An RNA of 177 nucleotides, treated with 2A3 and DMS and read out base by base.
[RMDB]
RNA sequence: GGGAACGACUCGAGUAGAGUCGAAAAUGUCCCCCCAGGAAUGGCGGGACCCCACUCGACAGGGUCCGCGUACCAUCCUUUCUUACCUGAUGGCCGGCAUGGUCCCAGCCUCCUCGCUGGCGCCGGCGUGUUAGGUAUAGUUCGCUAUACCUAACACAAAAGAAACAACAACAACAAC
Reactivity to 2A3 in 0.01 (KOAc 150mM, MgCl2 10mM, bicine 150mM(pH8.5), 24C), signal-to-noise 3, nucleotides 027 to 126: u300g210u060c010c000c000c000c000c010a000g000g010a090a050u010g020g000c020g010g030g000a010c020c000c000c010a080c060u170c090g080a070c060a060g000g020g000u000c010c000g090c010g050u030a090c010c000a010u020c020c000u050u100u030c050u040u060a110c000c040u080g090a140u140g200g000c000c000g000g000c010a070u140g040g070u110c030c020c000a000g000c010c000u090c020c020u080c050g000c010u000g010g000c010g000c010c020g020g010c000
Reactivity to DMS in 0.01 (KOAc 150mM, MgCl2 10mM, bicine 150mM(pH8.5), 24C), signal-to-noise 6, nucleotides 027 to 126: u020g000u000c010c000c000c040c030c040a030g010g010a060a050u000g010g020c080g000g010g010a020c000c010c010c060a150c170u000c190g000a080c180a180g000g000g010u000c010c010g010c060g020u010a100c020c000a040u000c010c010u000u000u010c090u000u000a120c100c070u010g000a110u010g010g020c010c010g010g000c010a150u010g030g010u010c180c000c000a030g010c010c070u000c120c080u000c170g000c010u000g020g000c100g000c010c000g010g000c040
Conditions: 150 mM KOAc, 10 mM MgCl2 and 150 mM bicine (pH 8.5), 24 C. The data come from the RNA Mapping Database (RMDB), library 15KREP. As a SHAPE reagent, 2A3 marks flexible, mostly unpaired nucleotides at the ribose 2'-OH. For DMS, 7,485 sequencing reads were counted. DMS adducts were read by reverse transcription with MarathonRT.